[RMDB]
Overview:
An RNA of 207 nucleotides, treated with DMS and 2A3 and read out base by base. 2A3 adducts were read by reverse transcription with SuperScript II with manganese.

RNA sequence: GGGAACGACUCGAGUAGAGUCGAAAAAGAGGAGGCUGAGUUUUGCGAUCUUUAAGCAGAUGGCAGGUUCACCCCGUACGGUGCGGAAGUUCGCGCUUCCGUGAAACGCGAAAAUCGGACGGUGGCUAAGACCAAUAACAGUUCGCUGUUAUUGGAAGAAUCGUUUUGAGUUCGCUCAAAACGAUUCAAAAGAAACAACAACAACAAC
Reactivity to DMS in 0.01 (KOAc 150mM, MgCl2 10mM, bicine 150mM(pH8.5), 24C), signal-to-noise 1, nucleotides 027 to 156: a040g010a080g010g010a050g020g020c050u010g010a080g000u000u010u000u020g010c020g000a100u000c030u020u000u000a160a160g070c110a080g010a030u000g010g020c010a070g000g040u000u000c040a080c030c000c000c000g040u030a030c030g010g040u000g020c010g030g000a060a120g020u000u000c250g010c260g020c000u000u000c010c100g020u000g010a060a050a040c040g000c040g000a060a070a130a080u000c000g010g000a020c010g040g010u000g050g000c020u010a090a180g010a160c000c010a030a050u000a010a010c000a020g000u020u020c210g000c010u000g010u000u000a030u010u000g010g000a010a100
Reactivity to 2A3 in 0.01 (KOAc 150mM, MgCl2 10mM, bicine 150mM(pH8.5), 24C), signal-to-noise 3, nucleotides 027 to 156: a000g080a030g040g000a030g040g000c020u020g020a010g050u020u060u190u100g020c030g060a040u020c040u030u160u090a110a050g000c030a010g030a070u060g090g030c010a010g020g000u060u050c030a050c000c020c000c000g000u020a020c060g000g000u040g030c000g000g020a010a010g020u110u230c090g020c010g000c120u000u000c010c000g030u040g050a080a080a020c100g020c020g080a070a020a010a100u050c000g010g010a010c010g030g030u080g010g000c010u050a090a010g030a070c000c000a000a000u000a000a000c000a000g020u040u060c150g060c110u000g000u000u000a000u000u000g000g000a020a010
Background: For DMS the reverse transcriptase was MarathonRT.